An RNA of 177 nucleotides, treated with 2A3 and DMS and read out base by base. For DMS the reverse transcriptase was MarathonRT. Conditions: 150 mM KOAc, 10 mM MgCl2 and 150 mM bicine (pH 8.5), 24 C. Reactivities are given for positions 27 through 126. The 2A3 profile rests on 1,286 reads.
RNA sequence: GGGAACGACUCGAGUAGAGUCGAAAAACGCCUACGACGAGGGGAAGGAGAUCCGGCUCACCAUAGAGGAGGCGGAGCGCCAGAUCUUCGAGCUCACCGAGCUGGGUACCACCUCCACGGUGAAGCACCAGAUCGAAUCUUUCGAGAUUCGAUCUGGAAAAGAAACAACAACAACAAC
Reactivity to 2A3 in 0.01 (KOAc 150mM, MgCl2 10mM, bicine 150mM(pH8.5), 24C), signal-to-noise 1, nucleotides 027 to 126: a010c040g060c000c010u020a090c040g180a030c000g000a060g000g000g050g020a060a090g050g030a100g000a040u000c030c010g050g040c000u040c020a080c000c040a060u150a190g170a130g050g030a000g000g050c000g010g000a030g000c040g080c020c000a040g000a060u030c000u060u040c070g010a010g010c010u030c020a050c000c020g010a000g000c020u020g020g050g030u100a200c030c020a040c010c000u030c010c020a010c030g040g000u020g000a120a030g000c010a040
Reactivity to DMS in 0.01 (KOAc 150mM, MgCl2 10mM, bicine 150mM(pH8.5), 24C), signal-to-noise 1, nucleotides 027 to 126: a080c220g020c030c000u010a120c100g000a150c050g010a030g000g000g000g000a140a070g020g020a060g000a060u000c030c000g010g020c030u000c020a070c030c040a300u010a080g020a100g000g000a020g010g000c090g000g000a100g010c060g020c020c010a030g000a150u000c030u000u000c020g010a100g010c080u010c090a020c050c040g000a030g030c050u010g020g030g050u010a130c270c100a050c010c000u020c020c010a020c020g000g010u000g000a020a080g000c060a160